RNA sequence: GGGAACGACUCGAGUAGAGUCGAAAAGAUAUGGACGAAGGUGGUGACAUAAGUAGCGUCGGAAACGACGCUACUAAGUUGUCCCACUUCGUCCUAAGUCAAAUCUGCUCGCUUCGGCGAGCAGAAAGUACAUAAAGGCCUUCGGGCCUUUAUGUACAAAAGAAACAACAACAACAAC
Reactivity to DMS in 0.01 (KOAc 150mM, MgCl2 10mM, bicine 150mM(pH8.5), 24C), signal-to-noise 1, nucleotides 027 to 126: g030a090u000a300u040g000g000a010c000g000a060a000g030g020u000g050g020u000g000a000c010a030u010a200a040g020u000a000g040c000g000u000c010g000g000a170a140a270c000g010a010c010g000c000u000a020c000u000a000a060g030u030u000g040u000c010c000c000a010c000u000u000c000g000u000c000c000u000a010a100g020u000c050a100a130a080u010c000u000g020c000u000c000g010c000u010u000c240g000g000c020g010a020g000c000a000g000a000a020a080
An RNA of 177 nucleotides, treated with DMS and read out base by base.
For DMS the reverse transcriptase was MarathonRT.
For DMS, 1,153 sequencing reads were counted.